RNA sequence: GGGAACGACUCGAGUAGAGUCGAAAAGAUAUGGAGAUUACUAAUUUGAUGACCCCAGUUUAUGGAAAUGCUUUCGGAAACGAAAGCACACCAUAAACUGGGCAAGAAUAACGUAAUCUCCUAAGUCCCUGCUAGUAUAGUUCGCUAUACUAGCAGGAAAAGAAACAACAACAACAAC
Reactivity to 2A3 in 0.01 (KOAc 150mM, MgCl2 10mM, bicine 150mM(pH8.5), 24C), signal-to-noise 2, nucleotides 027 to 126: g060a050u150a070u270g000g000a000g010a010u010u000a020c040u050a070a150u090u050u100g270a300u150g060a110c000c000c000c090a000g000u000u000u020a020u010g000g020a080a220a100u070g000c000u020u000u010c000g050g040a100a120a080c010g000a000a000a020g050c000a000c020a010c010c010a000u000a000a020a010c000u000g000g000g000c000a050a040g020a030a050u090a080a000c050g000u000a000a000u000c000u020c010c000u000a020a000g020u050c010
Reactivity to DMS in 0.01 (KOAc 150mM, MgCl2 10mM, bicine 150mM(pH8.5), 24C), signal-to-noise 2, nucleotides 027 to 126: g010a120u000a290u000g020g000a030g040a010u020u010a000c000u010a300a040u000u000u000g000a080u000g010a120c300c010c010c020a010g000u000u000u000a000u000g000g000a040a150a300u000g000c000u000u000u010c010g000g040a160a090a200c010g000a010a000a000g040c000a000c140a150c010c000a000u000a000a010a000c000u010g000g000g000c000a030a020g000a000a010u020a040a200c300g000u000a020a010u000c000u010c000c000u010a060a080g010u000c040
Source: RMDB library TTRINS, as collected in RNAgym. This 177-nucleotide RNA was probed chemically with 2A3 and DMS. Values cover nucleotides 27 to 126. In probing experiments dimethyl sulfate is read out at A N1 and C N3, which are open when not base-paired. For DMS the reverse transcriptase was MarathonRT.